[RMDB]
The data come from the RNA Mapping Database (RMDB), library OK3TST. An RNA of 207 nucleotides, treated with 2A3 and read out base by base. The RNA was probed in 150 mM KOAc, 10 mM MgCl2 and 150 mM bicine (pH 8.5) at 24 C.
RNA sequence: GGGAACGACUCGAGUAGAGUCGAAAAGGAUCGGGAAUGCCGAGAAUCGAUCGCUUCACGUCAAAAUCCUUGUCGAUCCAAAUAUUAACAUACUGGAUAUUGGGGUGAACCAUUCGAAUGCUAUAUUCUCCGUGGUCGCCGGAGUCGGCAUUGAAGCGGUUGUUCGGUCAUUCGUGACCGAACAACCAAAAGAAACAACAACAACAAC
Reactivity to 2A3 in 0.01 (KOAc 150mM, MgCl2 10mM, bicine 150mM(pH8.5), 24C), signal-to-noise 1, nucleotides 027 to 156: g020g050a060u080c060g130g000g040a020a170u000g120c050c020g000a050g030a080a020u140c010g020a000u000c070g010c040u060u050c070a070c000g300u070c020a050a040a040a040u050c040c000u010u070g050u090c000g020a000u040c060c000a080a000a000u300a180u170u100a120a050c030a020u210a130c080u050g000g000a000u000a110u060u010g010g000g000g000u000g000a000a000c070c060a000u020u150c010g110a060a010u030g010c000u070a030u050a080u300u000c000u000c000c020g000u100g080g080u040c030g000c030c060g000g000a020g020u160c110g030g020c000a000u010u070g050a080a020g000c010